[RMDB]
RNA sequence: GGGAACGACUCGAGUAGAGUCGAAAAAGAGGCGAUACGUCGCCUCAAGCUUGGUGCUUAGCUUCUUUCACCAAGCAUAUUACACGCGGAUAACCGCCAAAGGAGAAACACUGACUACGGUCAGUGAGUUCCCGGAAUUGUUCGCAAUUCCGGGAACAAAAGAAACAACAACAACAAC
Reactivity to 2A3 in 0.01 (KOAc 150mM, MgCl2 10mM, bicine 150mM(pH8.5), 24C), signal-to-noise 3, nucleotides 027 to 126: a000g020a000g000g020c020g000a020u040a080c230g090u010c000g000c000c000u000c000a000a000g010c000u000u000g000g010u000g020c040u070u000a110g060c010u050u040c010u000u010u020c000a000c000c000a010a000g010c000a010u100a010u030u180a060c060a040c040g010c000g000g020a100u050a290a290c020c000g030c020c020a020a040a000g020g000a010g000a000a110a000c010a000c010u000g020a000c010u050a030c280g100g000u000c000a000g000u000g010a020
The record gives the reactivity of an RNA of 177 nucleotides to 2A3. The reactions ran in a buffer of 150 mM KOAc, 10 mM MgCl2 and 150 mM bicine (pH 8.5), at 24 C. The data come from the RNA Mapping Database (RMDB), library RFM100.